[RMDB]
RNA sequence: GGGAACGACUCGAGUAGAGUCGAAAAUCACAUCUGCUGGUAUGCAGGGCUACAUGGCUGGCGAGUCUCUCGCUGGGUCCAAGCCGUCAGGCGGUGCAGCUCCAAUUAGUGCCGCUAAAGGCACACCUCCUACGCUCACAUUCGUGUGAGCGUAGGAAAAAGAAACAACAACAACAAC
Reactivity to 2A3 in 0.01 (KOAc 150mM, MgCl2 10mM, bicine 150mM(pH8.5), 24C), signal-to-noise 4, nucleotides 027 to 126: u080c000a010c010a060u040c010u050g020c020u070g030g050u140a030u130g040c010a040g100g010g000c000u050a050c040a090u130g030g000c000u000g020g000c020g000a020g130u090c040u030c000u010c180g010c030u030g000g000g070u070c020c030a030a020g010c000c010g070u060c030a010g000g050c020g000g040u010g000c010a010g030c040u040c070c020a060a050u110u080a160g000u000g010c000c010g050c030u110a180a010a070g010g000c000a020c000a000c010c020
Reactivity to DMS in 0.01 (KOAc 150mM, MgCl2 10mM, bicine 150mM(pH8.5), 24C), signal-to-noise 3, nucleotides 027 to 126: u050c080a190c190a030u000c000u010g000c000u010g000g010u000a020u030g010c020a110g010g010g020c020u010a050c170a220u000g000g050c010u000g000g000c000g000a070g010u060c040u060c020u000c000g000c000u000g020g000g000u060c010c090a040a030g030c050c010g040u050c080a220g010g000c000g030g040u010g000c000a110g000c110u000c040c040a060a120u030u010a090g010u000g000c000c010g000c150u000a000a080a110g000g010c030a020c060a080c140c100